Source information:
Chemical mapping of a 177-nucleotide RNA with DMS and 2A3. Values are in units of 0.01, from 0 to 300, in steps of 10. The reactions ran in a buffer of 150 mM KOAc, 10 mM MgCl2 and 150 mM bicine (pH 8.5), at 24 C. It was measured as part of the RMDB libraries RFM100 and RFMREP. For 2A3 the reverse transcriptase was SuperScript II with manganese.
RNA sequence: GGGAACGACUCGAGUAGAGUCGAAAAGGCUUCUGCUGGUCCGCCGAUCGGCUCGGGGCGUGGACUGUUGUCGGCCGUGCCGGCGGCCUAAGCCCGGGGGCCCUAGGUGCCUCCGGUCGCCGUCGUCUUAGCUACUAAAAUUCGUUUUAGUAGCUAAAAAAGAAACAACAACAACAAC
Reactivity to DMS in 0.01 (KOAc 150mM, MgCl2 10mM, bicine 150mM(pH8.5), 24C), signal-to-noise 7, nucleotides 027 to 126: g000g000c010u010u010c110u010g020c040u000g000g000u010c030c050g010c040c030g000a150u000c030g010g010c020u020c050g010g000g000g000c020g020u010g010g010a100c090u010g000u000u000g010u010c000g010g000c020c020g010u010g010c110c000g010g010c000g000g010c040c080u000a060a080g010c130c000c020g000g000g000g000g000c000c020c140u020a110g010g020u010g010c010c000u000c010c000g000g010u000c130g000c020c020g010u000c080g010u010c060
Reactivity to 2A3 in 0.01 (KOAc 150mM, MgCl2 10mM, bicine 150mM(pH8.5), 24C), signal-to-noise 5, nucleotides 027 to 126: g020g000c020u050u030c050u190g040c030u060g010g020u040c020c020g000c000c010g030a090u080c020g040g010c070u050c080g020g010g020g020c040g030u100g030g060a050c050u080g090u130u080g160u120c000g010g010c010c000g000u020g050c030c000g000g000c000g000g000c000c010u030a030a000g010c000c000c000g000g000g000g000g000c000c010c040u100a110g030g160u130g120c010c000u000c000c010g000g010u030c030g000c010c000g010u040c010g020u010c040